[RMDB]
RNA sequence: GGGAACGACUCGAGUAGAGUCGAAAACGCGUGAUGAGGUGCAGAAGGCAUGUCGCCGCUACGGCGGUGGCUCGCGUAGCCGUCUGGCUGUGCGCGUACUGUGAGCUACUGUACUCCAUGGGUGAACAUGUUUUGUUUAUUUCGAUAAACAAAACAUAAAAGAAACAACAACAACAAC
Reactivity to DMS in 0.01 (KOAc 150mM, MgCl2 10mM, bicine 150mM(pH8.5), 24C), signal-to-noise 9, nucleotides 027 to 126: c050g010c060g030u020g000a080u020g010a070g010g030u000g010c010a030g000a180a080g000g020c020a090u010g020u000c010g020c000c010g020c010u000a090c200g030g010c000g010g020u000g010g000c010u000c050g010c050g020u010a030g010c000c000g010u030c190u030g010g010c000u010g010u010g010c000g010c070g010u020a070c140u010g010u010g010a090g010c020u010a110c020u000g010u000a050c010u000c020c010a030u000g000g010g010u010g000a100a120c200
Reactivity to 2A3 in 0.01 (KOAc 150mM, MgCl2 10mM, bicine 150mM(pH8.5), 24C), signal-to-noise 9, nucleotides 027 to 126: c050g020c020g020u060g030a170u080g050a070g050g050u050g000c000a010g020a260a070g100g000c030a030u090g010u030c000g000c020c010g000c010u030a030c220g090g000c000g000g000u000g000g000c010u000c010g020c020g010u020a010g000c010c020g130u190c190u200g020g000c010u040g030u070g050c010g000c020g010u040a080c060u100g080u080g090a030g020c010u050a030c010u040g010u020a010c000u000c020c000a030u030g040g080g020u070g030a040a030c050